The record gives the reactivity of an RNA of 177 nucleotides to 2A3 and DMS.
The reactions ran in a buffer of 150 mM KOAc, 10 mM MgCl2 and 150 mM bicine (pH 8.5), at 24 C.
The data come from the RNA Mapping Database (RMDB), library M2PK90.
For 2A3 the reverse transcriptase was SuperScript II with manganese.
For DMS the reverse transcriptase was MarathonRT.
RNA sequence: GGGAACGACUCGAGUAGAGUCGAAAAUUAAUGAGGACCAAAUGGGUGUAAAGCCCGUAAUGCUCGAAAUGGUCCUAAACAGCCAAAUCGGGCAAAUCGAGCAAUCCCAACGACAGCGACAAAACAACUUAAGUAACUACUUCGGUAGUUACUUAAGAAAAGAAACAACAACAACAAC
Reactivity to 2A3 in 0.01 (KOAc 150mM, MgCl2 10mM, bicine 150mM(pH8.5), 24C), signal-to-noise 3, nucleotides 027 to 126: u130u080a030a110u140g080a030g130g040a020c000c030a000a060a090u090g010g030g010u080g000u070a200a160a010g000c040c000c000g010u010a030a030u050g000c000u000c000g010a000a020a040u020g000g000u000c000c000u000a020a050a010c020a010g000c000c010a000a000a070u050c040g000g020g000c000a010a020a030u070c010g000a010g000c000a020a140u040c020c000c000a020a010c020g080a010c020a030g050c010g040a030c030a050a110a060a010c040a050a020
Reactivity to DMS in 0.01 (KOAc 150mM, MgCl2 10mM, bicine 150mM(pH8.5), 24C), signal-to-noise 5, nucleotides 027 to 126: u000u040a100a080u010g010a100g010g000a100c010c020a060a120a080u010g010g010g030u000g010u000a110a150a200g010c010c020c000g000u000a060a130u000g030c000u000c010g010a010a050a300u000g000g000u010c020c020u010a020a070a110c210a300g000c010c000a010a040a270u000c030g020g000g000c020a030a060a110u000c010g000a020g020c000a110a110u000c010c010c000a090a060c060g000a040c050a050g010c040g000a040c110a050a060a090a060c150a060a120